[RMDB]
RNA sequence: GGGAACGACUCGAGUAGAGUCGAAAAGCCCACAAGUGGAGGCUUCGAACUCCCACCUGACCGCCCCCUGGGGCGGCGGGUCACCGGUCAGACGGUCCCGUCCCGAGGCGGCGAUCCGUCCGAAUGCGAGAAAACGUAUGUUCGCAUACGUUUUCUCAAAAGAAACAACAACAACAAC
Reactivity to DMS in 0.01 (KOAc 150mM, MgCl2 10mM, bicine 150mM(pH8.5), 24C), signal-to-noise 1, nucleotides 027 to 126: g020c010c000c030a090c100a000a010g020u020g000g000a000g000g000c050u030u040c190g020a140a080c000u000c000c010c010a030c000c010u010g000a100c010c000g000c000c010c000c100c240u020g000g010g030g000c000g000g000c020g030g000g000u000c160a070c170c120g020g000u000c040a040g000a000c030g000g000u000c010c000c000g010u000c000c170c190g000a160g020g010c020g020g000c140g000a000u000c000c000g000u000c010c040g000a050a030u000g000c250
Reactivity to 2A3 in 0.01 (KOAc 150mM, MgCl2 10mM, bicine 150mM(pH8.5), 24C), signal-to-noise 1, nucleotides 027 to 126: g070c000c090c000a050c020a000a080g030u220g110g010a000g020g010c090u220u140c210g060a050a030c020u030c010c000c000a030c000c000u120g120a300c000c000g000c000c020c000c000c040u030g040g000g000g020c070g030g020c000g000g000g020u020c000a040c090c070g100g090u080c050a020g000a020c010g050g010u000c020c020c000g080u110c100c060c100g150a300g000g010c000g000g000c000g030a000u080c010c020g010u000c020c000g040a050a030u070g060c070
The record gives the reactivity of an RNA of 177 nucleotides to DMS and 2A3. It was measured as part of the RMDB library RFMREP. For 2A3 the reverse transcriptase was SuperScript II with manganese. The DMS profile rests on 909 reads. For 2A3, 934 sequencing reads were counted. Conditions: 150 mM KOAc, 10 mM MgCl2 and 150 mM bicine (pH 8.5), 24 C.